This 177-nucleotide RNA was probed chemically with 2A3 and DMS. The 2A3 profile rests on 12,134 reads. 2A3 adducts were read by reverse transcription with SuperScript II with manganese. For DMS, 11,905 sequencing reads were counted. It was measured as part of the RMDB library M2PK50.
RNA sequence: GGGAACGACUCGAGUAGAGUCGAAAAGGGUUACCCUUCGGGGUAACCCAUACCUCCUGGCGGUGCGGCGCCGGCCCCGCCGGGAAGGCCGCCUAUACCUCCUAAAGGAAUCAUUCGUGAUUCCUAAAUAGUGAAGUAUAUUCGUAUACUUCACUAUAAAAGAAACAACAACAACAAC
Reactivity to 2A3 in 0.01 (KOAc 150mM, MgCl2 10mM, bicine 150mM(pH8.5), 24C), signal-to-noise 5, nucleotides 027 to 126: g020g000g000u060u050a000c010c020c000u030u070c270g010g000g000g000u000a000a000c000c000c000a000u010a000c000c000u020c000c010u010g010g010c000g010g040u050g050c030g050g010c070g050c080c000g040g000c020c020c010c030g010c010c010g000g010g000a000a000g020g010c050c020g060c020c010u110a120u060a100c000c010u040c010c020u120a230a150a020g000g010a000a010u000c000a010u030u120c150g080u030g010a000u000u000c000c000u010a030a050
Reactivity to DMS in 0.01 (KOAc 150mM, MgCl2 10mM, bicine 150mM(pH8.5), 24C), signal-to-noise 6, nucleotides 027 to 126: g000g010g010u000u000a010c000c000c000u000u010c200g030g020g010g000u000a000a000c000c000c000a010u000a030c070c040u000c020c020u000g000g010c020g000g020u000g010c080g020g010c050g010c080c060g000g010c010c050c060c040g020c050c030g010g000g000a020a030g010g010c100c080g010c020c040u000a100u010a160c070c030u000c010c030u000a080a100a050g000g000a010a010u000c000a030u000u010c180g010u000g000a010u000u000c000c000u010a020a040